[RMDB]
RNA sequence: GGGAACGACUCGAGUAGAGUCGAAAAUGAACCUUAUGUCGGCAUCUGGUGGUAACCCCUCGCAGAAAAGUCGAGAUAAGGCACUCUCUAUCAGAAUGGAUGUCUUGCUGCUAUAAUAGAUAGAGAAAGUUCUCUCCGUGUUCGCACGGAGAGAACUAAAAGAAACAACAACAACAAC
Reactivity to 2A3 in 0.01 (KOAc 150mM, MgCl2 10mM, bicine 150mM(pH8.5), 24C), signal-to-noise 1, nucleotides 027 to 126: u050g000a020a000c000c000u000u000a030u000g300u030c000g000g000c000a080u010c000u020g050g030u070g050g000u030a050a080c040c000c020c010u000c040g300c010a010g000a000a210a000a040g020u030c000g030a000g010a000u000a000a000g040g010c000a030c000u040c000u000c000u000a000u010c000a000g080a300a190u170g000g100a030u030g090u030c110u120u180g070c020u070g120c040u060a000u090a190a070u030a040g000a030u000a000g000a000g000a160a040
This 177-nucleotide RNA was probed chemically with 2A3.
The 2A3 profile rests on 464 reads.
2A3 adducts were read by reverse transcription with SuperScript II with manganese.
The RNA was probed in 150 mM KOAc, 10 mM MgCl2 and 150 mM bicine (pH 8.5) at 24 C.